An RNA of 177 nucleotides, treated with DMS and read out base by base. For DMS, 1,585 sequencing reads were counted. In probing experiments dimethyl sulfate is read out at A N1 and C N3, which are open when not base-paired.
RNA sequence: GGGAACGACUCGAGUAGAGUCGAAAAGAUAUGGAAAGAGGAACUUGAGCGAUGGGUGCCAGCUAUUCGGUCGGAAACGACCGGUAGCGGUAAUUCCCAUUCGCUCAAGUUCCUCUUUCCUAAGUCACUCUUUCAAAGAGUUCGCUCUUUGAAAGAGAAAAGAAACAACAACAACAAC
Reactivity to DMS in 0.01 (KOAc 150mM, MgCl2 10mM, bicine 150mM(pH8.5), 24C), signal-to-noise 1, nucleotides 027 to 126: g020a050u000a300u000g010g000a020a040a010g010a030g010g000a020a000c000u010u000g000a020g010c020g050a010u000g000g000g040u000g000c000c000a110g020c000u000a000u000u000c010g020g010u000c000g000g000a180a070a290c030g000a010c000c020g020g020u000a000g000c000g000g000u000a040a180u010u010c000c010c010a000u010u000c020g040c010u000c000a000a000g010u000u000c000c000u000c020u000u000u000c000c000u000a010a070g000u000c030a260
DMS adducts were read by reverse transcription with MarathonRT.
The RNA was probed in 150 mM KOAc, 10 mM MgCl2 and 150 mM bicine (pH 8.5) at 24 C.